[RMDB]
RNA sequence: GGGAACGACUCGAGUAGAGUCGAAAAGAAAAAAAGAAGCGAGCUGGCGCAGCCGCACGGGCAACCGUCAAUCCAGCACUUCACAAGUCUUGUCGUUCUGACAGGACAUCCAUCAACCCACCGGGAAAAAAGGACUACAGCUUCGGCUGUAGUCCAAGAUUAGAUAUUGCUUCGGCAAUAUCUAAUCAAAAGAAACAACAACAACAAC
Reactivity to 2A3 in 0.01 (KOAc 150mM, MgCl2 10mM, bicine 150mM(pH8.5), 24C), signal-to-noise 2, nucleotides 027 to 156: g050a020a050a000a010a000a010a020g030a040a010g020c050g080a000g030c020u010g010g030c040g000c110a040g100c060c160g060c030a020c000g000g000g020c060a110a080c010c000g030u010c020a020a040u090c010c000a010g020c020a040c000u010u030c030a050c050a220a070g000u020c020u000u020g010u000c010g090u300u200c170u300g000a000c000a000g000g000a000c000a010u030c010c000a040u040c040a080a080c040c000c050a030c110c090g000g000g040a000a040a000a030a110a080g030g000a010c000u020a000c010a000g010c010u000u140c210g200g000c030u020g000u000a000g020u000c000c010a000a000